Chemical mapping of a 207-nucleotide RNA with DMS and 2A3. The 2A3 profile rests on 1,662 reads. The reactions ran in a buffer of 150 mM KOAc, 10 mM MgCl2 and 150 mM bicine (pH 8.5), at 24 C. Reactivities are rounded to 0.1 and cut off at 0 and 3. Reactivities are given for positions 27 through 156.

[RMDB]
RNA sequence: GGGAACGACUCGAGUAGAGUCGAAAACACAGAAGAGUCUGAUUGACAUGAGUGCUGAUCGUGGUGCGUACAUCGACCAGUCCCAGUCUCUGAACAUCUUCAUGGAGAAUCCUUCACUGGCCAAGUUGAGCUCGAUGCACUUUUACGGGUGGAAGAAGAUUUGAAGUCCAUUCGUGGACUUCAAAUCAAAAGAAACAACAACAACAAC
Reactivity to DMS in 0.01 (KOAc 150mM, MgCl2 10mM, bicine 150mM(pH8.5), 24C), signal-to-noise 2, nucleotides 027 to 156: c030a160c060a140g010a060a070g000a150g010u010c000u010g000a090u000u000g010a070c040a140u000g040a110g000u000g030c020u010g000a040u010c030g060u000g000g020u010g050c170g000u000a090c060a080u010c010g040a060c030c010a060g010u000c030c050c030a120g010u000c010u050c040u010g020a060a140c060a130u000c030u000u010c060a130u000g010g020a170g000a080a050u020c010c020u000u010c030a070c030u000g020g060c010c000a040a240g020u000u000g000a070g030c050u000c050g000a100u000g020c080a020c040u000u000u010u000a070c090g000g000g040u000g020g000a070a090g020a110a140
Reactivity to 2A3 in 0.01 (KOAc 150mM, MgCl2 10mM, bicine 150mM(pH8.5), 24C), signal-to-noise 3, nucleotides 027 to 156: c040a010c020a020g070a050a040g030a020g020u040c050u060g090a220u170u170g040a040c100a140u110g020a050g060u090g020c000u000g010a020u050c020g050u050g070g040u120g050c090g070u080a100c000a110u110c070g030a030c020c000a000g060u050c010c000c000a010g010u010c000u000c010u050g080a110a020c020a170u000c030u100u020c020a130u060g040g010a060g000a060a070u060c030c000u060u090c030a040c070u040g040g000c030c010a070a110g040u050u110g040a010g040c030u030c050g020a040u090g040c010a030c020u070u020u050u180a060c050g010g020g000u060g040g010a030a030g030a060a000